[RMDB]
RNA sequence: GGGAACGACUCGAGUAGAGUCGAAAACUCAAUGUAGGGAAUAACAUUGAAUUGAUACAAAUACCUUUUUCGGUGUAGGGAAAAACACCGAAAUGAUACAAAUACCUUUCUCAAUGUAGGGAAUAACAAAACAGGCAUCGCUUCGGCGAUGCCUGAACGGUUCUCUUAAGUUCGCUUAAGAGAACCGAAAAGAAACAACAACAACAAC
Reactivity to 2A3 in 0.01 (KOAc 150mM, MgCl2 10mM, bicine 150mM(pH8.5), 24C), signal-to-noise 2, nucleotides 027 to 156: c010u000c010a010a040u080g010u020a110g010g160g060a090a130u100a120a000c000a010u010u040g020a070a030u110u120g070a090u130a160c060a050a140a030u100a100c000c000u010u020u000u010u000c010g010g000u010g000u020a020g000g010g060a160a130a010a000a000c000a000c000c000g000a000a000a000u030g000a000u000a020c050a010a080a010u080a070c000c000u050u070u020c030u020c040a040a160u140g050u110a020g020g010g060a010a050u170a120a020c050a010a060a030a030c020a000g030g000c000a000u010c000g010c030u100u060c230g030g020c000g030a000u000g000c000c000u000g000a000a000